[RMDB]
RNA sequence: GGGAACGACUCGAGUAGAGUCGAAAAGAUAUGGAUGUAUCGCUAGGACGCGAUGAAACCUUUCGGAAACGAAAGGUGGAGCGUUUAGCGAGUACAUCCUAAGUCAAAAGGAAGCUUCGGCUUCCAAGAUGUUUUUGGAGUUCGCUCCAAAAACAUCAAAAGAAACAACAACAACAAC
Reactivity to 2A3 in 0.01 (KOAc 150mM, MgCl2 10mM, bicine 150mM(pH8.5), 24C), signal-to-noise 2, nucleotides 027 to 126: g070a040u050a050u240g020g020a010u010g050u020a030u060c020g000c000u040a050g040g300a020c000g040c000g300a300u020g030a030a030a010c030c000u010u000u000c000g010g090a030a070a070c010g020a000a010a010g000g040u000g000g000a020g000c010g000u060u020u010a000g000c040g020a030g000u000a010c000a000u000c000c020u020a080a050g000u040c040a020a060a070a190g010g000a000a020g010c010u090u140c300g160g000c000u010u000c040c000a000a000
Reactivity to DMS in 0.01 (KOAc 150mM, MgCl2 10mM, bicine 150mM(pH8.5), 24C), signal-to-noise 2, nucleotides 027 to 126: g000a030u000a300u030g000g010a040u010g000u000a040u000c000g040c030u000a000g030g050a010c000g030c000g080a100u010g000a100a120a020c000c000u000u010u000c000g010g010a070a170a190c000g000a020a000a010g000g000u010g000g030a030g020c010g020u000u000u000a000g000c010g020a070g010u000a000c000a000u000c000c000u010a010a080g010u010c020a100a050a150a150g000g010a010a000g000c010u000u010c190g020g010c010u000u010c000c010a000a060